Source: RMDB library TTRDEL, as collected in RNAgym. Structure probing data (DMS and 2A3) for a 177-nucleotide construct. DMS adducts were read by reverse transcription with MarathonRT. For DMS, 1,742 sequencing reads were counted. For 2A3, 3,536 sequencing reads were counted. 2A3 adducts were read by reverse transcription with SuperScript II with manganese.
RNA sequence: GGGAACGACUCGAGUAGAGUCGAAAAGAUAUGGAUAAUAGCUUGGACCCAUGAUGUCGGAAACGACAUAUGGCUAGCUAUAUCCUAAGUCAAAACAGCUGUAUGUUGUUCGCAACAUACAGCUGAAGUAUUCUUCACCGUUCGCGGUGAAGAAUACAAAAGAAACAACAACAACAAC
Reactivity to DMS in 0.01 (KOAc 150mM, MgCl2 10mM, bicine 150mM(pH8.5), 24C), signal-to-noise 2, nucleotides 027 to 126: g000a050u000a240u000g010g000a020u000a070a060u000a010g000c010u000u000g010g010a110c260c000c010a000u010g000a030u000g010u000c000g000g000a050a040a110c000g000a020c010a010u000a010u000g020g020c030u000a020g000c010u000a000u000a030u000c000c010u000a030a110g020u000c030a090a080a110a290c010a010g000c020u000g010u010a000u000g010u000u000g010u000u020c160g050c010a000a000c000a000u000a000c010a000g010c000u000g010a000a050
Reactivity to 2A3 in 0.01 (KOAc 150mM, MgCl2 10mM, bicine 150mM(pH8.5), 24C), signal-to-noise 3, nucleotides 027 to 126: g000a010u040a010u120g010g020a020u030a300a130u030a300g000c030u120u240g150g150a300c070c040c040a010u300g170a040u020g040u000c020g020g030a030a020a080c000g010a010c000a000u010a000u010g010g050c010u020a010g000c000u000a010u010a000u030c000c000u000a080a000g020u040c030a010a010a170a170c020a010g000c000u010g000u010a000u000g010u030u000g040u050u140c220g000c070a010a010c000a030u020a000c000a000g000c010u000g000a010a010